Annotation: Chemical mapping of a 177-nucleotide RNA with 2A3 and DMS. The 2A3 profile rests on 7,993 reads. 2A3 is a SHAPE reagent: it acylates the 2'-hydroxyl of flexible nucleotides of all four kinds. Values are in units of 0.01, from 0 to 300, in steps of 10. For DMS the reverse transcriptase was MarathonRT.

RNA sequence: GGGAACGACUCGAGUAGAGUCGAAAAUCAAGAAAAUGAAAGGGCUGGACGUCAAUGCCAGAACUGUGGACUCAGUGCUCUUGAAUGGAUGCAAACACCCCGUAGAGACCCUGUAUAUUGACGAAGCAUAUAUUCGUAUCUUCGGAUACGAAUAUAUAAAAGAAACAACAACAACAAC
Reactivity to 2A3 in 0.01 (KOAc 150mM, MgCl2 10mM, bicine 150mM(pH8.5), 24C), signal-to-noise 5, nucleotides 027 to 126: u040c010a010a040g100a070a130a020a070u190g070a120a070a050g050g010g000c010u030g010g060a030c030g030u070c040a030a040u070g030c020c000a000g020a050a030c040u030g040u090g090g020a030c030u000c070a030g050u020g060c010u010c010u070u030g020a060a040u110g050g060a030u120g060c040a000a160a040c020a080c030c030c000c010g020u050a040g020a000g030a100c040c020c000u020g030u060a120u010a020u080u050g020a010c010g020a030a010g050c040
Reactivity to DMS in 0.01 (KOAc 150mM, MgCl2 10mM, bicine 150mM(pH8.5), 24C), signal-to-noise 9, nucleotides 027 to 126: u010c050a080a100g010a060a090a100a090u010g000a090a110a080g010g000g020c010u000g010g010a100c080g010u000c080a040a050u000g000c030c030a020g000a070a060c060u000g010u010g010g010a100c080u000c030a050g020u000g010c070u000c020u000u000g010a080a100u010g010g010a080u010g000c120a060a080a120c120a120c050c010c010c050g020u000a090g000a110g000a080c030c020c010u000g000u000a090u010a060u010u000g000a050c040g000a100a100g020c190